This 177-nucleotide RNA was probed chemically with DMS and 2A3. The 2A3 profile rests on 2,934 reads. DMS (dimethyl sulfate) methylates the pairing face of unpaired adenines and cytosines. Conditions: 150 mM KOAc, 10 mM MgCl2 and 150 mM bicine (pH 8.5), 24 C. For DMS the reverse transcriptase was MarathonRT. It was measured as part of the RMDB library TTRDEL.

RNA sequence: GGGAACGACUCGAGUAGAGUCGAAAAGAUAUGGACACAGCAACAGCUGCUGGUCGGAAACGACCAGGCAGACAUGCUGGUCCUAAGUCAAAACCCUGUACCAUCUCUUCGGAGAUGGUACAGGGAAUCUGAUCUAUUCCUUCGGGAAUAGAUCAGAAAAAGAAACAACAACAACAAC
Reactivity to DMS in 0.01 (KOAc 150mM, MgCl2 10mM, bicine 150mM(pH8.5), 24C), signal-to-noise 2, nucleotides 027 to 126: g000a020u000a300u020g000g000a010c000a090c020a000g000c020a060a120c250a210g030c000u000g000c000u000g000g000u000c000g000g000a070a070a170c000g000a000c000c000a070g040g020c000a000g020a120c070a210u000g000c000u000g010g020u000c000c000u000a010a070g010u000c030a050a050a090a130c000c000c010u000g000u000a000c000c000a000u000c000u000c000u000u050c210g020g000a020g000a000u000g000g010u000a000c000a000g000g000g000a000a020
Reactivity to 2A3 in 0.01 (KOAc 150mM, MgCl2 10mM, bicine 150mM(pH8.5), 24C), signal-to-noise 2, nucleotides 027 to 126: g010a020u080a030u090g050g000a030c090a000c000a300g020c000a010a190c040a250g060c000u000g010c010u000g000g000u000c000g020g020a100a100a020c010g000a000c000c000a030g250g000c020a000g030a040c020a020u050g000c010u010g030g000u000c000c000u040a160a000g030u010c020a020a030a090a300c000c000c020u000g010u000a000c000c000a000u030c020u010c010u060u130c300g090g000a000g000a000u000g000g000u000a000c000a000g000g010g000a000a000